[RMDB]
Description
This 177-nucleotide RNA was probed chemically with DMS. It was measured as part of the RMDB library M2PK90. Values cover nucleotides 27 to 126. Conditions: 150 mM KOAc, 10 mM MgCl2 and 150 mM bicine (pH 8.5), 24 C. DMS adducts were read by reverse transcription with MarathonRT.

RNA sequence: GGGAACGACUCGAGUAGAGUCGAAAAUGAUUGAGCGUAGCACACACUCAGACUGUACGACACUCUGACACACACCUACGCUAGUGCAUCGUGUGUGUGAUAUCGAUGUAGCACGAAAAUGAAGUAAUGGGUUCAGUAAGUUCGCUUACUGAACCCAAAAAGAAACAACAACAACAAC
Reactivity to DMS in 0.01 (KOAc 150mM, MgCl2 10mM, bicine 150mM(pH8.5), 24C), signal-to-noise 2, nucleotides 027 to 126: u020g000a100u000u020g030a180g050c040g000u000a060g030c060a060c090a130c040a100c110u000c040a080g000a030c120u010g000u000a120c110g010a080c060a060c080u000c010u040g000a080c040a040c080a070c100a070c060c030u000a010c060g000c040u000a070g000u000g040c020a130u000c080g000u000g000u030g000u000g000u000g020a120u000a050u010c040g010a050u000g030u000a070g000c010a070c090g010a020a060a080a090u000g010a050a110g000u000a020a070